[RMDB]
RNA sequence: GGGAACGACUCGAGUAGAGUCGAAAACACGUUCCGCUUUUGGGAGUGUCAUCAUGGGCGACACUGGUUGUCAAGCUGCAUGGAUAUGCGGGGUUGCGCUCCAAGAUCAAGGAGUGUAGGGGCAUACGUGCAGUCCCUUUGGAGUUCAGGCAGGCCGGAACUAUAGGCCGUUCGCGGCCUAUAGUUCAAAAGAAACAACAACAACAAC
Reactivity to 2A3 in 0.01 (KOAc 150mM, MgCl2 10mM, bicine 150mM(pH8.5), 24C), signal-to-noise 1, nucleotides 027 to 156: c140a000c050g050u080u030c070c010g020c160u080u160u210u230g060g050g000a070g090u060g040u110c050a030u020c110a150u120g060g060g000c050g060a030c000a010c080u040g030g050u090u000g080u060c080a090a040g020c000u010g000c000a010u030g070g150a130u010a000u170g010c080g060g040g030g110u130u000g000c010g010c000u000c000c010a130a130g090a210u270c100a080a150g010g000a030g010u020g000u020a060g000g070g030g000c000a000u010a030c020g000u000g020c000a010g010u000c000c000c000u140u020u050g060g000a040g000u040u070c000a040g000g000c010a000g040g000c010c000g050
The record gives the reactivity of an RNA of 207 nucleotides to 2A3. The reactions ran in a buffer of 150 mM KOAc, 10 mM MgCl2 and 150 mM bicine (pH 8.5), at 24 C. The data come from the RNA Mapping Database (RMDB), library VIROID. For 2A3 the reverse transcriptase was SuperScript II with manganese.